[RMDB]
RNA sequence: GGGAACGACUCGAGUAGAGUCGAAAACACGAGGACCAUAGAGCAUAGUCUUGGGAUCUCGUAUUGUCAAGUGUAACUGACCAAUGCAGCUACGUCUUGCUGUGCAACGAUAUUAGGGCAUGUAGCAACUGACUAUGAAGUUCGCUUCAUAGUCAGUAAAAGAAACAACAACAACAAC
Reactivity to 2A3 in 0.01 (KOAc 150mM, MgCl2 10mM, bicine 150mM(pH8.5), 24C), signal-to-noise 2, nucleotides 027 to 126: c040a010c010g000a010g000g020a010c010c010a060u110a060g040a000g010c040a170u090a040g090u000c000u010u020g030g020g040a150u030c000u010c000g020u030a070u040u090g050u050c070a100a070g050u010g060u130a110a110c050u060g070a000c020c080a090a190u300g000c000a040g000c070u000a030c030g110u000c030u000u080g000c000u050g020u030g030c030a110a030c120g070a080u040a070u210u160a050g000g000g000c030a030u060g010u020a000g010c000a000
Reactivity to DMS in 0.01 (KOAc 150mM, MgCl2 10mM, bicine 150mM(pH8.5), 24C), signal-to-noise 1, nucleotides 027 to 126: c080a010c010g020a000g010g000a070c000c000a090u080a000g000a010g060c180a140u040a080g020u020c020u000u000g000g000g010a250u010c020u000c030g040u010a070u010u000g030u020c020a070a090g000u000g010u010a030a130c080u000g000a300c140c270a300a210u000g000c000a250g000c000u000a090c300g000u000c000u000u000g030c030u010g030u020g000c000a020a090c210g000a070u020a020u070u000a060g000g050g000c010a040u020g020u030a020g010c110a070

The data come from the RNA Mapping Database (RMDB), library OK1LIB. Structure probing data (2A3 and DMS) for a 177-nucleotide construct. As a SHAPE reagent, 2A3 marks flexible, mostly unpaired nucleotides at the ribose 2'-OH.